[RMDB]
RNA sequence: GGGAACGACUCGAGUAGAGUCGAAAAAUGAGAGUGGGACAGAAAUAAUAUUUUCUCAAAAUUUAUUUCGUUGUAUCCCCAGCUUGCUUAGCCUGUAGAAUUUCUUUAGGAAAUCCUCUUUGCUGGGAUAAAAAUUGUAAUUCGUUACAAUUUUUAUAAAAGAAACAACAACAACAAC
Reactivity to DMS in 0.01 (KOAc 150mM, MgCl2 10mM, bicine 150mM(pH8.5), 24C), signal-to-noise 2, nucleotides 027 to 126: a060u040g000a080g010a090g020u000g000g000g010a080c080a210g010a010a010a000u000a010a040u070a020u010u000u000u020c100u050c070a060a020a060a060u010u000u000a010u010u010u010c010g000u010u010g010u010a080u010c020c000c000c010a040g000c010u020u000g010c040u010u030a090g010c060c120u000g010u030a040g000a080a040u000u000u000c000u010u020u020a120g000g000a020a030a020u010c040c020u000c050u010u010u010g010c010u000g010g000g020
Reactivity to 2A3 in 0.01 (KOAc 150mM, MgCl2 10mM, bicine 150mM(pH8.5), 24C), signal-to-noise 2, nucleotides 027 to 126: a000u150g030a080g000a000g060u100g010g030g020a000c020a040g030a020a040a000u010a040a020u030a050u130u050u030u030c100u010c030a100a170a000a090u000u050u020a010u030u010u020c010g000u000u120g030u050a120u050c000c000c000c000a000g050c000u020u120g000c010u090u060a050g040c040c000u090g130u160a020g060a150a080u050u160u060c030u150u280u130a120g000g080a030a050a050u000c020c000u010c050u100u020u050g020c020u010g020g040g000
The record gives the reactivity of an RNA of 177 nucleotides to DMS and 2A3.
DMS (dimethyl sulfate) methylates the pairing face of unpaired adenines and cytosines.
Values cover nucleotides 27 to 126.
The RNA was probed in 150 mM KOAc, 10 mM MgCl2 and 150 mM bicine (pH 8.5) at 24 C.